This 207-nucleotide RNA was probed chemically with DMS and 2A3. The RNA was probed in 150 mM KOAc, 10 mM MgCl2 and 150 mM bicine (pH 8.5) at 24 C. The 2A3 profile rests on 5,658 reads. The data come from the RNA Mapping Database (RMDB), library OK3TST.
[RMDB]
RNA sequence: GGGAACGACUCGAGUAGAGUCGAAAAAACGGACGUCCUCUGGCGCUGGUACGUGAAGAUCAGCAGGCCGAUGCGUUACUGGAAACCUGGUUCAGCGGCACGGAAGGGGGCAAUGCGAUCGCCGAUGUGCUGUUUGGUGACUAUAACCCGUCCGGCACUUGCUUAGAAUUUUCGAAUUCUAAGCAAGAAAAGAAACAACAACAACAAC
Reactivity to DMS in 0.01 (KOAc 150mM, MgCl2 10mM, bicine 150mM(pH8.5), 24C), signal-to-noise 3, nucleotides 027 to 156: a060a050c040g000g010a020c030g000u010c050c050u000c050u020g060g020c030g040c030u020g040g070u000a060c060g020u000g010a120a120g010a060u000c020a110g010c030a100g050g000c010c020g030a100u000g030c070g030u000u000a040c050u000g010g000a060a110a090c050c010u000g000g010u000u010c050a080g020c000g000g020c010a070c040g010g000a130a070g000g010g020g030g000c040a090a060u010g010c080g000a170u000c020g000c020c020g010a240u010g020u000g000c010u000g000u010u000u000g030g030u000g020a190c040u000a110u000a090a070c010c010c020g000u000c000c040g020g020c030a170
Reactivity to 2A3 in 0.01 (KOAc 150mM, MgCl2 10mM, bicine 150mM(pH8.5), 24C), signal-to-noise 6, nucleotides 027 to 156: a000a000c020g010g010a000c010g050u080c010c040u050c150u160g010g010c020g000c010u020g030g000u080a150c090g170u230g150a160a030g020a080u030c010a020g020c020a070g190g000c000c000g020a030u060g020c040g040u010u020a060c090u120g010g000a030a030a000c000c010u040g040g030u060u060c020a010g000c000g020g020c020a010c030g070g130a180a240g090g010g010g010g000c030a040a080u170g030c020g070a140u050c060g000c070c000g020a040u060g000u010g000c000u010g060u130u200u100g010g000u010g000a010c010u020a010u020a060a020c000c010c000g010u020c000c000g010g000c020a030